[RMDB]
RNA sequence: GGGAACGACUCGAGUAGAGUCGAAAAACGUUCAGCAAAGCCGCGUAAAUUAAAGUUACGACUCGUAAUAUCAGGAAUAUAGCGUCGACGAUGUAGCAAUGUUUCCACGUAACCUAAAGCUUUGGCACGCGCAUACGAAAUUCGUUUCGUAUGCGCGAAAAGAAACAACAACAACAAC
Reactivity to 2A3 in 0.01 (KOAc 150mM, MgCl2 10mM, bicine 150mM(pH8.5), 24C), signal-to-noise 1, nucleotides 027 to 126: a030c010g000u100u100c040a050g060c030a070a060a040g000c070c000g090c000g090u110a070a160a110u190u140a140a080a050g020u030u000a030c050g110a160c080u080c120g010u090a050a060u090a080u150c050a020g010g040a030a000u080a080u050a060g140c000g040u080c010g020a040c000g020a020u050g070u090a020g000c040a060a020u020g060u000u090u000c020c020a030c060g020u000a060a100c030c050u010a010a020a260g060c010u090u020u070g070g030c090a000
Reactivity to DMS in 0.01 (KOAc 150mM, MgCl2 10mM, bicine 150mM(pH8.5), 24C), signal-to-noise 1, nucleotides 027 to 126: a140c020g000u000u000c190a190g000c120a010a040a300g030c000c030g050c100g000u000a080a050a130u020u000a020a060a220g010u000u000a020c020g040a170c230u010c040g020u000a030a010u000a060u000c050a100g000g000a060a060u040a070u000a030g020c050g010u030c100g020a050c040g010a090u000g000u000a100g040c100a050a210u000g000u060u010u000c000c040a110c030g030u000a010a070c000c020u000a070a050a110g000c010u000u000u030g030g000c090a170
The data come from the RNA Mapping Database (RMDB), library OK2TRN. Structure probing data (2A3 and DMS) for a 177-nucleotide construct. For 2A3, 727 sequencing reads were counted. The RNA was probed in 150 mM KOAc, 10 mM MgCl2 and 150 mM bicine (pH 8.5) at 24 C.